[RMDB]
Chemical mapping of a 177-nucleotide RNA with 2A3 and DMS.
RNA sequence: GGGAACGACUCGAGUAGAGUCGAAAAGAUUGCUUCGCCGCAAAACUCCACCACAUGCCCGGUGCCGCCUGCGCUACCGGUUUUACCGAUAAUUGCCAGCACGAUAUCUUUUGCGGUAAUGCCCGGCUGCACAUCAUAUCUUCGGAUAUGAUGUGCAAAAAGAAACAACAACAACAAC
Reactivity to 2A3 in 0.01 (KOAc 150mM, MgCl2 10mM, bicine 150mM(pH8.5), 24C), signal-to-noise 1, nucleotides 027 to 126: g030a040u020u190g000c000u050u070c050g000c040c020g010c000a000a020a000a110c010u010c000c000a030c000c010a070c040a080u140g040c030c060c040g000g060u040g040c010c030g000c030c010u040g000c050g000c040u050a030c000c000g010g050u000u010u030u070a050c020c010g010a030u050a090a080u120u050g030c010c040a050g010c040a030c080g050a040u050a100u250c000u020u070u100u000g020c000g030g020u060a010a000u050g020c000c010c050g050g000c040
Reactivity to DMS in 0.01 (KOAc 150mM, MgCl2 10mM, bicine 150mM(pH8.5), 24C), signal-to-noise 2, nucleotides 027 to 126: g000a140u010u010g010c060u000u010c120g020c030c050g000c070a020a030a080a110c090u000c060c040a070c050c050a090c130a080u000g020c070c070c040g000g020u000g000c050c070g020c080c020u010g030c110g030c030u000a080c050c000g020g000u000u000u000u000a060c030c020g030a050u000a050a090u000u000g000c010c050a070g000c050a110c100g040a090u010a070u010c070u000u000u000u000g030c000g000g000u000a020a090u000g010c020c000c010g010g010c100